[RMDB]
RNA sequence: GGGAACGACUCGAGUAGAGUCGAAAAGAGCUGUCAAAAGACAGCUCACGAUCCAAAAGGAUCGAAACGCAGGAAGCACACAAGCCCGAAAAGAACGGCCUGCGCGUUGAAUCACAAAACCACAAAAGUGGAAGUGAUUCUACGAAGCUUGGUGCAACCAUCGCAUCAUCUUCGGAUGAUGCGAUGGAAAAGAAACAACAACAACAAC
Reactivity to 2A3 in 0.01 (KOAc 150mM, MgCl2 10mM, bicine 150mM(pH8.5), 24C), signal-to-noise 2, nucleotides 027 to 156: g010a000g000c000u000g010u020c020a030a060a200a300g020a010c000a000g000c000u000c000a000c000g000a000u000c000c000a030a240a140a290g010g000a010u010c030g010a100a100a000c000g020c000a000g000g020a100a160g010c000a000c000a010c000a010a000g000c000c000c000g030a070a100a060a080g060a110a030c000g010g000c000c000u010g010c000g000c000g000u030u000g000a000a000u000c000a000c010a040a090a250a110c010c010a000c010a010a290a280a120g010u000g000g010a060a020g000u000g000a000u010u000c000u000a000c000g000a000a000g000c000u020u000g010g000u000g000c030a030a060